[RMDB]
RNA sequence: GGGAACGACUCGAGUAGAGUCGAAAAGGGUGAGACCUAGGAACCGUAGGGGUAUUCUCAAAGGAAGCUUUUGCAGUGACGCCCAUUUAAGUGGGAUAUAACAACAGAACUCGUAUGAGUAGCCUAAUAAAUCGGACCUUCUUCGGAAGGUCCGAAACUUCUAUAUGACCUUCGGGUCAUAUAGAAGAAAAGAAACAACAACAACAAC
Reactivity to DMS in 0.01 (KOAc 150mM, MgCl2 10mM, bicine 150mM(pH8.5), 24C), signal-to-noise 1, nucleotides 027 to 156: g070g000g000u000g000a120g030a110c030c020u000a110g010g000a090a030c040c050g000u000a110g000g000g000g030u000a030u000u000c010u020c040a040a160a260g020g000a040a100g000c050u000u020u000u000g010c080a050g010u010g000a190c110g000c020c000c020a100u000u000u000a070a180g050u000g010g000g060a090u000a040u020a210a150c070a050a050c010a110g000a050a050c000u000c050g000u000a150u000g020a070g030u000a110g020c010c020u040a040a080u000a050a030a150u000c030g000g010a040c000c000u020u000c020u000u020c260g040g010a030a010g050g040u020c000c000g030a000a030a030
Reactivity to 2A3 in 0.01 (KOAc 150mM, MgCl2 10mM, bicine 150mM(pH8.5), 24C), signal-to-noise 2, nucleotides 027 to 156: g060g020g000u050g060a100g010a050c020c020u030a040g090g090a110a120c060c060g030u120a060g020g030g000g020u030a090u150u070c040u030c050a060a030a030g050g040a060a000g000c030u000u040u090u200g000c060a000g000u030g030a020c040g010c000c010c020a060u140u190u130a210a050g050u030g000g000g020a000u030a010u010a070a050c040a020a010c020a050g030a070a010c000u020c050g070u160a060u140g020a020g040u060a050g050c000c010u060a130a110u080a090a080a040u030c000g000g000a000c010c000u000u000c000u010u020c060g070g020a000a010g000g000u000c000c010g000a000a000a000